[RMDB]
RNA sequence: GGGAACGACUCGAGUAGAGUCGAAAAGCAGGGCGAAGAUGUCACAUCGUUUUAGUAUGCGACGCAAUGGCUUCGAGUCCGGCGGCGCAUCCACAAGCCUGUAGCGAGCCUCUAUAGGCUCUCGGAGGCGUACGUGCGGUUUCGACCGCACGUACGCAAAAGAAACAACAACAACAAC
Reactivity to 2A3 in 0.01 (KOAc 150mM, MgCl2 10mM, bicine 150mM(pH8.5), 24C), signal-to-noise 1, nucleotides 027 to 126: g090c020a000g020g000g000c030g040a060a000g030a050u050g140u300c000a080c000a050u220c080g040u160u130u000u060a100g020u000a170u120g030c000g000a000c000g000c070a140a220u120g000g000c020u080u000c270g090a000g020u030c000c000g000g000c000g030g000c040g000c030a100u000c000c000a060c000a080a020g010c020c000u020g000u000a000g000c000g000a000g000c030c020u040c150u150a220u030a080g000g000c000u080c000u000c000g130g050a040g060
Reactivity to DMS in 0.01 (KOAc 150mM, MgCl2 10mM, bicine 150mM(pH8.5), 24C), signal-to-noise 1, nucleotides 027 to 126: g100c020a180g020g000g020c000g000a090a130g000a100u000g020u040c200a060c000a020u000c060g080u000u000u000u000a190g000u000a000u000g000c000g000a000c020g070c090a110a030u060g000g000c000u000u000c280g030a100g000u040c030c220g000g000c060g000g000c000g000c090a000u000c000c020a180c300a200a070g000c000c000u000g000u010a160g000c110g000a060g000c000c000u090c300u110a190u080a100g000g000c000u030c030u000c020g000g000a050g090